[RMDB]
An RNA of 207 nucleotides, treated with 2A3 and read out base by base. The 2A3 profile rests on 1,776 reads. 2A3 adducts were read by reverse transcription with SuperScript II with manganese. 2A3 is a SHAPE reagent: it acylates the 2'-hydroxyl of flexible nucleotides of all four kinds.

RNA sequence: GGGAACGACUCGAGUAGAGUCGAAAAGGGGUCAAACAGAUCACUUGGAUUUAGAAUUGAGGUACACUGAAGCCUCCACGGUGUACUACCCACCAAUUCUUGUCAGUGAUCAUGUUUGACGGAGGCACCCAAACAGGUUCAGUUCGCUGAACCUGAAGGGCUAUUAGUCGUUCGCGACUAAUAGCCCAAAAGAAACAACAACAACAAC
Reactivity to 2A3 in 0.01 (KOAc 150mM, MgCl2 10mM, bicine 150mM(pH8.5), 24C), signal-to-noise 2, nucleotides 027 to 156: g040g020g000g030u000c010a000a000a000c000a010g060a060u060c010a010c090u270u300g140g000a060u290u300u190a000g000a000a000u010u000g000a000g000g020u000a000c000a000c000u010g030a060a020g010c000c000u000c000c000a000c000g000g000u000g000u000a000c000u010a020c080c080c000a050c000c010a000a010u000u000c010u000u020g040u040c160a180g000u000g010a000u000c010a040u170g030u000u000u000g010a000c010g000g000a000g010g000c010a030c000c000c030a020a110a080c000a010g000g010u010u010c000a000g000u100u140c200g000c140u000g000a000a000c000c000u000g000a040a010